[RMDB]
RNA sequence: GGGAACGACUCGAGUAGAGUCGAAAAAUACACCAGCAGUAGGUCUCAGCGACCGUCACAACAAGGUUGUGCUGGUAUCCGACGGUCGUAUAGCCCUGUCUUGCAGGUUGCCUUGCACUGACGUGCCACACCAUUUACAGAUUCGUCUGUAAAUGAAGAAUGUAAGAAAGUUCGCUUUCUUACAUUCAAAAGAAACAACAACAACAAC
Reactivity to DMS in 0.01 (KOAc 150mM, MgCl2 10mM, bicine 150mM(pH8.5), 24C), signal-to-noise 4, nucleotides 027 to 156: a130u000a100c080a200c020c010a090g020c020a070g030u000a040g020g010u000c020u000c110a150g000c030g000a010c000c010g010u000c030a160c080a100a080c120a070a090g020g010u000u000g020u010g030c000u010g010g010u000a060u000c060c050g030a070c030g010g010u000c020g020u000a160u000a100g000c050c010c000u010g010u000c030u000u000g000c040a090g020g010u000u000g020c040c100u000u000g000c010a050c070u010g010a140c140g030u000g000c010c050a110c050a140c100c000a020u000u000u000a010c000a010g000a070u000u000c300g020u000c010u000g020u000a010a010a000u000g010a050a140
Reactivity to 2A3 in 0.01 (KOAc 150mM, MgCl2 10mM, bicine 150mM(pH8.5), 24C), signal-to-noise 8, nucleotides 027 to 156: a000u150a010c060a010c010c000a000g000c000a000g020u130a010g010g010u000c010u000c050a010g000c000g000a000c010c010g000u000c010a090c060a180a130c080a220a140g040g010u040u020g020u040g020c010u020g020g020u010a050u000c020c030g010a000c000g010g000u000c000g000u030a020u030a060g000c000c010c000u030g050u070c040u030u100g010c020a020g030g040u100u140g050c020c010u030u050g010c020a050c070u100g050a040c060g030u050g050c030c030a110c010a030c040c000a000u000u000u000a000c000a000g010a020u020u090c160g090u010c100u000g000u000a000a000a000u000g000a020a020